[RMDB]
RNA sequence: GGGAACGACUCGAGUAGAGUCGAAAAGACGCCUGUGUGGCGAAACGAGCAAUGGAAUAAGCCGCAAUAGAAGAUGAGAUGGAAGCGGCAAGAUAGAAUGCUCGCAACAAGAUCCAUCUCACAGAGACAUAUUACGGCGUUUCGACGCCGUAAUAUGAAAAGAAACAACAACAACAAC
Reactivity to 2A3 in 0.01 (KOAc 150mM, MgCl2 10mM, bicine 150mM(pH8.5), 24C), signal-to-noise 5, nucleotides 027 to 126: g050a010c020g040c010c000u120g050u070g110u250g180g000c020g020a060a050a010c020g010a000g010c040a030a180u190g020g070a140a130u210a150a010g000c000c000g000c010a010a130u130a160g090a120a010g110a280u020g000a020g000a000u010g000g000a020a060g000c000g010g000c010a000a000g040a000u140a030g120a050a030u030g010c020u030c000g000c030a010a140c030a060a050g030a050u010c000c000a000u010c000u000c010a020c000a010g090a000g000a000
Reactivity to DMS in 0.01 (KOAc 150mM, MgCl2 10mM, bicine 150mM(pH8.5), 24C), signal-to-noise 3, nucleotides 027 to 126: g010a210c050g000c020c010u020g050u020g000u020g000g020c000g030a040a170a090c020g000a020g020c030a090a080u000g000g020a280a100u020a120a130g030c000c030g000c000a220a140u070a100g010a080a100g000a110u030g000a000g010a000u000g000g000a050a130g000c040g010g000c000a000a080g000a170u010a070g030a140a050u000g000c010u000c000g000c110a120a010c140a070a040g000a180u020c000c000a000u000c000u000c000a020c100a160g010a120g010a140

Structure probing data (2A3 and DMS) for a 177-nucleotide construct. Values cover nucleotides 27 to 126. Source: RMDB library OK1LIB, as collected in RNAgym.